[RMDB]
RNA sequence: GGGAACGACUCGAGUAGAGUCGAAAAUCAGGUCACUUCGGUGACCUGAAAACAAGGAACCAAAAGGAAAACCUAACCAAGGAAUAUGGUAACCAAAAUAAAAAACCAUAGCCUUCGGGCUAUGGAAGGAUUAAUUGUACUUCGGUACAAUUAAUCCAAAAGAAACAACAACAACAAC
Reactivity to 2A3 in 0.01 (KOAc 150mM, MgCl2 10mM, bicine 150mM(pH8.5), 24C), signal-to-noise 2, nucleotides 027 to 126: u010c000a000g000g010u000c000a010c020u020u130c220g140g000u000g000a000c000c010u000g000a010a000a000a000c040a030a060g090g010a020a020c010c030a050a060a000a100g050g030a110a120a020a010c010c010u040a030a000c040c030a090a050g060g040a120a080u100a040u140g010g000u030a010a080c020c020a020a080a140a040u280a060a150a040a010a000a010c000c010a000u000a000g020c010c000u030u050c280g060g000g000c000u000a000u000g000g000a000a020
Reactivity to DMS in 0.01 (KOAc 150mM, MgCl2 10mM, bicine 150mM(pH8.5), 24C), signal-to-noise 1, nucleotides 027 to 126: u010c000a000g000g010u000c000a000c020u010u000c200g060g000u000g030a030c000c010u000g000a020a050a020a070c160a080a050g000g030a250a090c010c000a050a100a080a090g010g000a010a110a140a070c030c000u000a050a110c060c050a090a010g000g000a100a070u000a090u010g000g010u010a080a160c030c060a070a070a080a070u020a000a030a120a100a050a100c000c000a000u000a000g000c000c000u000u040c240g010g010g000c010u000a000u000g000g000a040a000
The record gives the reactivity of an RNA of 177 nucleotides to 2A3 and DMS. Values are in units of 0.01, from 0 to 300, in steps of 10. In probing experiments dimethyl sulfate is read out at A N1 and C N3, which are open when not base-paired. Source: RMDB library M2PK50, as collected in RNAgym. 2A3 adducts were read by reverse transcription with SuperScript II with manganese.